[RMDB]
RNA sequence: GGGAACGACUCGAGUAGAGUCGAAAACCGCGAAAAAUCUCACCGACUUCGCGGUGAAAGGCGCACAGUGCAGUAUCAACCCGGAUGUAGCUGCCGCUUGUCUUGCUUUUGCGGAUGCGCAAAAACAAUCACUACGUAGGUUCGCCUACGUAGUGAUAAAAGAAACAACAACAACAAC
Reactivity to 2A3 in 0.01 (KOAc 150mM, MgCl2 10mM, bicine 150mM(pH8.5), 24C), signal-to-noise 3, nucleotides 027 to 126: c010c010g000c010g020a010a010a040a120a150u060c100u040c060a110c060c080g080a060c060u030u020c030g000c010g020g000u000g000a030a040a000g090g000c030g030c020a020c030a090g060u040g080c010a010g010u110a030u120c030a040a090c030c020c060g040g010a030u050g050u100a030g030c010u030g010c020c040g010c000u020u110g040u060c040u060u160g060c000u060u080u060u120g010c020g070g070a170u210g070c030g030c020a000a010a010a010a000c040a030
Reactivity to DMS in 0.01 (KOAc 150mM, MgCl2 10mM, bicine 150mM(pH8.5), 24C), signal-to-noise 4, nucleotides 027 to 126: c000c010g030c010g020a010a000a060a130a140u010c080u010c150a090c240c090g020a090c140u000u000c010g000c000g000g020u000g000a070a080a040g010g010c020g000c020a090c040a050g020u000g010c020a030g020u000a090u000c050a040a130c030c020c030g010g000a100u020g000u000a070g030c020u000g000c110c040g020c100u020u000g010u000c070u010u010g020c030u000u010u000u010g010c010g000g020a150u000g010c000g030c020a020a000a040a030a040c090a080